RNA sequence: GGGAACGACUCGAGUAGAGUCGAAAAGAAAGCGCGAGGCUGCGAAGCGGUCGACAGUGAGAUCCUGAGGCCGGAAAGGAUCGAACUGGAGUCGUAUGUCCGGCCAAAUGCGACGAGCGCGAAGAAAGGGAAUUACGAAGUUCGCUUCGUAAUUCCCAAAAGAAACAACAACAACAAC
Reactivity to DMS in 0.01 (KOAc 150mM, MgCl2 10mM, bicine 150mM(pH8.5), 24C), signal-to-noise 2, nucleotides 027 to 126: g000a120a110a180g020c000g020c030g020a220g030g000c000u010g000c090g030a070a020g000c020g020g000u030c000g000a190c000a010g010u000g020a270g020a000u000c000c000u040g000a270g010g000c030c010g050g040a100a180a010g020g000a020u000c030g000a240a030c000u000g000g000a160g030u000c000g020u010a060u060g000u010c000c020g000g000c000c040a050a030a090u030g000c030g000a030c060g000a090g000c000g010c000g010a130a080g000a020a050a160
Reactivity to 2A3 in 0.01 (KOAc 150mM, MgCl2 10mM, bicine 150mM(pH8.5), 24C), signal-to-noise 2, nucleotides 027 to 126: g030a010a100a000g020c020g000c000g000a020g030g000c010u020g020c080g060a060a000g020c020g060g030u190c020g010a010c010a000g000u000g000a000g000a040u000c010c000u030g020a070g090g000c030c030g000g000a100a040a010g000g000a010u000c010g000a020a000c010u010g010g010a030g040u070c020g000u040a030u200g110u000c000c000g000g000c000c000a050a050a000u160g030c030g000a010c020g040a040g060c020g000c030g050a060a050g100a070a100a050